[RMDB]
RNA sequence: GGGAACGACUCGAGUAGAGUCGAAAAAGAGCAGUGGUAUAGUGCGAAGGUACACUGAGGGACUAGGCUGACGGUCAUAGUGCGACUGUAAACAAAGCAUGUUGUGCACCCCACACCUCCCUGCUGGACGUGGGUUCAAUUCCCACCAUCUCCAGGCCAUUGGAGGUACCUUCGGGUACCUCCAAUGAAAAGAAACAACAACAACAAC
Reactivity to 2A3 in 0.01 (KOAc 150mM, MgCl2 10mM, bicine 150mM(pH8.5), 24C), signal-to-noise 2, nucleotides 027 to 156: a000g050a010g030c070a020g050u020g040g030u070a110u080a140g040u040g020c040g060a110a000g030g020u060a010c020a000c020u050g020a150g010g050g020a020c050u060a030g070g000c080u060g010a030c050g040g020u010c030a100u110a090g030u030g090c040g030a000c020u010g100u300a170a100a020c070a020a090a010g090c020a040u130g010u050u030g060u070g030c000a040c000c000c000c000a020c000a020c000c000u070c040c010c010u040g030c000u000g000g030a020c060g000u000g000g030g000u010u050c030a010a030u060u020c000c000c000a000c010c000a040u070c040u000c030c010a020g000g040c020
Reactivity to DMS in 0.01 (KOAc 150mM, MgCl2 10mM, bicine 150mM(pH8.5), 24C), signal-to-noise 1, nucleotides 027 to 156: a070g010a040g040c020a080g060u000g040g040u010a060u010a070g000u010g000c020g000a130a080g000g030u000a000c030a000c010u000g000a090g020g040g040a120c050u000a050g030g050c030u010g000a060c080g030g030u020c030a130u000a150g010u030g010c080g000a060c050u020g030u000a040a010a080c100a130a130a120g020c040a160u000g030u000u000g010u010g010c060a080c050c020c000c020a100c040a070c020c010u000c020c000c020u000g110c020u000g010g050a040c030g000u000g010g010g020u000u010c180a050a300u020u000c000c000c020a040c030c000a080u010c050u010c010c010a070g060g020c120